[RMDB]
The data come from the RNA Mapping Database (RMDB), libraries RFM100 and RFMREP. The record gives the reactivity of an RNA of 177 nucleotides to DMS and 2A3. For 2A3, 1,164 sequencing reads were counted. High 2A3 reactivity points to a flexible backbone, as in loops and unpaired stretches.
RNA sequence: GGGAACGACUCGAGUAGAGUCGAAAACGACCGUAUCACCGUAACGAAUUAAUGCUGCCCCACUUGCUUGUUUUGCUAAUUGACCUACUUCAACAGAUAAUGUUUUACCUGCCCAUUCUGUUGAAAAAAUCAAGAGCCUAUUCGUAGGCUCUUGAUUAAAAGAAACAACAACAACAAC
Reactivity to DMS in 0.01 (KOAc 150mM, MgCl2 10mM, bicine 150mM(pH8.5), 24C), signal-to-noise 4, nucleotides 027 to 126: c180g020a120c060c020g000u030a070u010c030a050c040c020g020u000a080a060c060g000a070a060u010u000a070a080u040g010c050u000g000c050c010c010c020a090c090u010u000g000c070u010u020g010u000u000u020u020g030c040u020a100a100u010u020g000a130c040c050u010a070c060u010u000c010a010a020c050a020g010a050u010a050a090u030g000u020u030u020u010a100c060c030u010g020c020c020c020a080u000u000c010u010g000u000u000g000a000a020a050a120
Reactivity to 2A3 in 0.01 (KOAc 150mM, MgCl2 10mM, bicine 150mM(pH8.5), 24C), signal-to-noise 2, nucleotides 027 to 126: c060g040a050c020c000g020u060a050u090c000a030c000c020g040u040a090a080c080g020a040a090u120u090a050a040u170g050c030u020g010c000c000c010c000a070c060u030u020g000c010u070u030g000u070u080u080u090g030c030u100a060a140u080u110g050a060c020c030u040a100c030u030u020c000a000a000c000a000g010a060u070a060a030u100g040u010u150u000u010a070c030c030u020g040c010c010c000a000u050u020c000u000g010u010u010g030a030a000a010a000
The reactions ran in a buffer of 150 mM KOAc, 10 mM MgCl2 and 150 mM bicine (pH 8.5), at 24 C.